Structure probing data (2A3) for a 207-nucleotide construct. The RNA was probed in 150 mM KOAc, 10 mM MgCl2 and 150 mM bicine (pH 8.5) at 24 C. For 2A3 the reverse transcriptase was SuperScript II with manganese. Reactivities are given for positions 27 through 156. Source: RMDB library RNAMAK, as collected in RNAgym. The 2A3 profile rests on 846 reads.
[RMDB]
RNA sequence: GGGAACGACUCGAGUAGAGUCGAAAACAAUGAUAGGUUCGCCUAUCAUUGAAAAACCGUAGGCCAGGCUUUUGACGCUCUGACACUUCGAAAGAGGUGGAGGAGCGAUAAGCCUGAGCCUAAACGGAAAAAAUCUAUAGCGUUCGCGCUAUAGAAAGACCUCAGGAAUAUUCGUAUUCCUGAGGUCAAAAGAAACAACAACAACAAC
Reactivity to 2A3 in 0.01 (KOAc 150mM, MgCl2 10mM, bicine 150mM(pH8.5), 24C), signal-to-noise 1, nucleotides 027 to 156: c000a000a000u000g000a000u000a000g070g030u040u040c280g130c010c000u010a000u010c000a000u000u000g010a000a000a000a020a010c000c000g000u000a000g000g000c000c010a000g000g000c030u010u110u130u150g240a130c030g000c000u000c030u040g000a000c000a000c000u040u000c010g060a130a100a060g000a020g000g020u010g000g000a050g020g000a010g000c000g000a000u000a000a000g000c000c000u000g000a010g000c000c000u010a010a020a000c010g090g080a010a010a070a010a000a270u090c060u120a020u020a000g000c000g100u070u020c300g010c000g030c120u100a020u110a000g000a130a000a050